[RMDB]
RNA sequence: GGGAACGACUCGAGUAGAGUCGAAAAACUCCACCUAGGUAUUGGAAUAAUGGUAAACCUAUUUCAUCAGCAGCUGCUCUAGCUACUGCCAUUGAAACACCUAAUAUAGCAUUAGCUCCUAAUUUACGACUCAGCUCAGCUUCGGCUGAGCUGAGUCAAAAGAAACAACAACAACAAC
Reactivity to 2A3 in 0.01 (KOAc 150mM, MgCl2 10mM, bicine 150mM(pH8.5), 24C), signal-to-noise 1, nucleotides 027 to 126: a000c040u020c000c000a040c000c070u030a010g120g040u010a130u090u300g160g090a070a000u160a150a000u160g200g050u300a300a060a000c000c000u070a100u000u070u060c040a090u000c000a000g030c000a000g000c030u190g040c000u120c290u240a060g000c000u010a030c000u000g000c000c030a100u130u010g030a000a000a000c030a000c010c000u000a040a170u190a060u010a060g090c040a040u050u050a000g010c010u040c040c010u040a090a010u100u030u300a010c000
An RNA of 177 nucleotides, treated with 2A3 and read out base by base.
Conditions: 150 mM KOAc, 10 mM MgCl2 and 150 mM bicine (pH 8.5), 24 C.
Values cover nucleotides 27 to 126.
It was measured as part of the RMDB library OK1LIB.
The 2A3 profile rests on 316 reads.